Chemical mapping of a 207-nucleotide RNA with 2A3. Source: RMDB library OK3TST, as collected in RNAgym. Values cover nucleotides 27 to 156.

[RMDB]
RNA sequence: GGGAACGACUCGAGUAGAGUCGAAAAAGGCCAUCCAUAGGCCCACAGACAGAGACAGAGGAGGCCAAGCCCCAGAGACCACAGUGGAACAAGUGUCUUGGGGUGCUUUGCCCAUAGGUGCAGCUUAAUGAAGGACAGCCAGAGGACACGGUUGUAAAGUCGUAUUGUGAUUCGUCACAAUACGACUAAAAGAAACAACAACAACAAC
Reactivity to 2A3 in 0.01 (KOAc 150mM, MgCl2 10mM, bicine 150mM(pH8.5), 24C), signal-to-noise 1, nucleotides 027 to 156: a090g070g000c020c000a030u010c070c010a070u110a220g000g000c040c010c000a060c030a040g170a000c050a020g040a010g010a040c040a020g020a060g160g010a000g000g000c000c030a030a000g000c000c000c000c000a000g010a010g020a170c180c000a020c040a070g100u180g100g140a170a080c080a220a000g030u080g040u010c000u000u060g000g000g060g010u020g000c000u020u040u090g010c010c000c070a030u100a010g110g020u080g050c090a040g000c000u110u150a100a060u240g040a090a000g050g030a060c030a000g000c010c000a000g020a080g120g010a020c080a010c190g000g050u000u000g040u000a130a150